[RMDB]
RNA sequence: GGGAACGACUCGAGUAGAGUCGAAAAGAUAUGGAGACCCGACGCGAAACACGUGUGUCGGAAACGACACCGUGGAGUCGCUCCUAAGUCAAAGCUACUAUUGACAGUUCGCUGUCAAUAGUAGCAACACCAAAUCAUCCUUCGGGAUGAUUUGGUGAAAAGAAACAACAACAACAAC
Reactivity to DMS in 0.01 (KOAc 150mM, MgCl2 10mM, bicine 150mM(pH8.5), 24C), signal-to-noise 2, nucleotides 027 to 126: g010a140u010a230u010g010g010a300g000a130c130c150c030g020a060c110g000c020g010a090a020a270c010a000c000g020u000g030u010g050u000c000g010g000a010a100a130c010g010a000c000a040c020c000g020u020g000g000a120g040u000c000g000c010u010c000c000u000a080a170g020u010c140a160a110a140g010c000u000a010c000u000a000u000u000g000a020c000a010g010u000u020c180g000c010u000g010u000c000a000a020u010a000g000u010a010g000c000a050a060
Reactivity to 2A3 in 0.01 (KOAc 150mM, MgCl2 10mM, bicine 150mM(pH8.5), 24C), signal-to-noise 2, nucleotides 027 to 126: g040a100u220a120u210g090g040a120g020a100c050c130c110g020a020c050g050c040g090a080a060a030c000a000c000g080u150g000u000g030u300c000g020g100a020a020a040c000g010a000c020a010c010c000g010u010g000g010a040g010u000c000g000c020u000c030c000u100a190a100g110u100c100a150a090a050g010c010u000a000c010u010a000u020u000g010a000c010a020g000u040u060c180g020c140u000g020u010c020a010a020u000a010g000u010a000g000c020a000a010

An RNA of 177 nucleotides, treated with DMS and 2A3 and read out base by base. The data come from the RNA Mapping Database (RMDB), library TTRDEL. For 2A3, 2,215 sequencing reads were counted. High 2A3 reactivity points to a flexible backbone, as in loops and unpaired stretches. The RNA was probed in 150 mM KOAc, 10 mM MgCl2 and 150 mM bicine (pH 8.5) at 24 C.